[RMDB]
This 207-nucleotide RNA was probed chemically with 2A3 and DMS. For DMS, 10,345 sequencing reads were counted. The RNA was probed in 150 mM KOAc, 10 mM MgCl2 and 150 mM bicine (pH 8.5) at 24 C. Source: RMDB library OK3TST, as collected in RNAgym. For 2A3, 4,336 sequencing reads were counted.
RNA sequence: GGGAACGACUCGAGUAGAGUCGAAAACAGUCCAUGGGCAGAAGUGUGGGCUGCACAGCACCAAGGGCCUCACUGGGGACAGGAACGACUUAUCCUUCCUAUGCCUCUAGCACUUAGUACAGCUGACAUUGGCAGCUAUUUGUUGAGUGGCUGAGUAUACUCAUAAUAGCUUCGGCUAUUAUGAGUAAAAAGAAACAACAACAACAAC
Reactivity to 2A3 in 0.01 (KOAc 150mM, MgCl2 10mM, bicine 150mM(pH8.5), 24C), signal-to-noise 5, nucleotides 027 to 156: c040a010g020u020c040c010a060u100g020g030g000c060a060g030a220a080g040u040g020u070g060g010g020c010u030g030c060a050c030a040g080c030a020c070c010a060a060g050g000g000c030c020u040c030a070c040u050g010g000g000g040a020c030a050g030g010a040a030c050g070a040c140u150u160a100u170c000c000u020u030c010c000u030a060u210g020c000c010u020c010u040a020g000c010a010c030u030u020a010g020u100a070c050a080g000c010u020g080a100c030a230u150u190g070g000c000a010g000c010u040a080u060u070u110g030u050u060g050a060g040u040g010g000c020u010g010a010g050u120a060
Reactivity to DMS in 0.01 (KOAc 150mM, MgCl2 10mM, bicine 150mM(pH8.5), 24C), signal-to-noise 4, nucleotides 027 to 156: c020a080g000u000c000c000a080u000g010g010g040c040a130g000a120a150g010u000g030u000g010g020g020c010u000g030c040a110c080a110g020c050a110c010c030a070a130g010g010g020c020c040u010c060a060c070u000g000g010g010g020a080c020a050g010g020a050a060c020g020a160c170u010u010a140u010c040c020u000u000c010c010u000a080u010g040c020c010u000c020u000a040g010c020a070c050u010u000a080g010u010a060c080a080g000c020u000g020a060c050a200u000u000g010g020c020a080g010c030u000a050u010u000u010g000u000u000g000a130g000u000g000g010c000u000g040a050g030u000a180